Chemical mapping of a 207-nucleotide RNA with 2A3.
It was measured as part of the RMDB library OK3TST.
[RMDB]
RNA sequence: GGGAACGACUCGAGUAGAGUCGAAAAUGGGGUACAUUCUCCCUUGCUUCAGCAUGCUAAAUACAUUUAUUUAUCACUCUAGAUGUAAUCCUGGUGGUCUUUGGGCAGUCAGUGGACUUCAUCAGAAGUUUCAAACCUUACUUUUCCAUUGUGACAACAGUAGCUCACCAUUCGUGGUGAGCUACUGAAAAGAAACAACAACAACAAC
Reactivity to 2A3 in 0.01 (KOAc 150mM, MgCl2 10mM, bicine 150mM(pH8.5), 24C), signal-to-noise 2, nucleotides 027 to 156: u010g000g000g000g020u110a050c020a060u050u030c060u070c050c020c000u000u040g000c010u050u080c020a090g040c010a030u070g030c040u200a050a090a030u070a030c030a080u050u130u100a120u120u150u080a140u190c030a040c050u040c020u010a020g000a130u030g070u030a060a060u040c020c030u090g020g030u070g000g060u040c010u060u030u090g030g020g000c020a040g000u040c000a000g010u050g040g000a010c000u040u000c020a120u040c030a020g030a070a000g020u020u100u200c040a050a090a060c000c000u030u030a030c020u000u050u070u000c020c030a030u130u180g070u210g020a040c030a060a000